[RMDB]
RNA sequence: GGGAACGACUCGAGUAGAGUCGAAAAGAUGCUACAGCAAUUAUAGGUCGAGAGAAGGUGAGUAUUCCUAAAGGCGUGACUAUGGUUGCCUUCAGUGGGCAUAAGUUUCAUGCUCUCUCAGGAAUAGCUCCCCACCAGAAUUCGUUCUGGUGGGGAGAAAAGAAACAACAACAACAAC
Reactivity to 2A3 in 0.01 (KOAc 150mM, MgCl2 10mM, bicine 150mM(pH8.5), 24C), signal-to-noise 1, nucleotides 027 to 126: g050a020u060g080c020u030a030c080a070g000c030a070a060u190u080a170u280a140g070g070u100c100g020a010g020a010g050a120a020g070g010u090g050a050g050u010a080u000u050c000c000u050a090a060a040g030g000c040g000u020g010a010c040u050a030u060g060g050u030u020g020c020c000u060u090c090a220g070u290g080g000g000c000a000u000a100a000g000u030u080u000c040a020u020g060c000u000c010u010c000u000c200a000g010g000a000a050u000a020g000
Reactivity to DMS in 0.01 (KOAc 150mM, MgCl2 10mM, bicine 150mM(pH8.5), 24C), signal-to-noise 1, nucleotides 027 to 126: g010a070u010g010c020u010a030c070a060g010c050a050a080u000u010a100u000a090g000g000u000c050g000a090g020a120g010a060a080g000g010u000g030a090g000u000a040u010u000c000c010u030a020a120a060g000g010c000g060u010g010a030c090u000a010u020g020g020u000u000g020c000c020u000u000c300a170g030u010g010g010g000c030a000u000a210a140g000u000u010u010c010a000u000g000c010u040c020u000c070u000c180a030g010g000a010a060u000a060g030
The data come from the RNA Mapping Database (RMDB), library OK2TST.
Structure probing data (2A3 and DMS) for a 177-nucleotide construct.